The record gives the reactivity of an RNA of 207 nucleotides to 2A3 and DMS.
Conditions: 150 mM KOAc, 10 mM MgCl2 and 150 mM bicine (pH 8.5), 24 C.
For 2A3, 1,063 sequencing reads were counted.
The DMS profile rests on 4,324 reads.

RNA sequence: GGGAACGACUCGAGUAGAGUCGAAAAUAGGCGAACGAGAGGCCCUCUCAUGUGCGGAGUUGUCACGCUGACAUAAUUGUUAUGAUGUCCGAUUCCGGUAGCAUCGCGGCGAUGCUUUCAUAGGACAUCUUAUGAACCCAAGGGCUUCGGGGAAGCAAGGCAUAUUAUCGUUCGCGAUAAUAUGCCUAAAAGAAACAACAACAACAAC
Reactivity to 2A3 in 0.01 (KOAc 150mM, MgCl2 10mM, bicine 150mM(pH8.5), 24C), signal-to-noise 2, nucleotides 027 to 156: u190a010g040g040c020g000a040a040c060g000a060g050a010g140g000c000c000c000u030c000u000c020a050u110g050u080g010c090g000g030a030g010u090u060g050u060c050a040c100g030c020u020g050a020c000a040u110a060a150u130u040g120u080u090a080u170g000a000u000g000u000c000c000g030a070u170u090c120c040g010g010u030a010g020c010a010u000c030g020c130g290g010c140g000a000u000g000c000u040u040u080c110a130u150a080g000g000a010c000a010u000c000u000u020a020u020g060a020a020c020c000c000a030a020g020g000g020c000u030u030c020g000g000g000g050a060a000g010c050a040
Reactivity to DMS in 0.01 (KOAc 150mM, MgCl2 10mM, bicine 150mM(pH8.5), 24C), signal-to-noise 2, nucleotides 027 to 156: u000a060g000g010c020g000a060a100c070g000a100g000a020g040g010c010c010c010u000c020u010c080a150u000g030u000g010c040g010g020a120g040u000u000g020u000c070a090c070g020c020u000g000a140c100a040u000a110a150u000u000g040u020u010a090u000g010a020u010g010u000c010c020g010a260u000u000c120c080g020g020u000a010g010c010a040u000c000g000c130g030g010c190g000a040u000g010c010u000u000u000c020a100u000a110g000g000a040c050a000u000c000u010u010a040u000g000a100a130c020c030c030a060a050g050g010g000c000u000u000c030g000g000g000g010a080a080g010c050a120

2A3 adducts were read by reverse transcription with SuperScript II with manganese.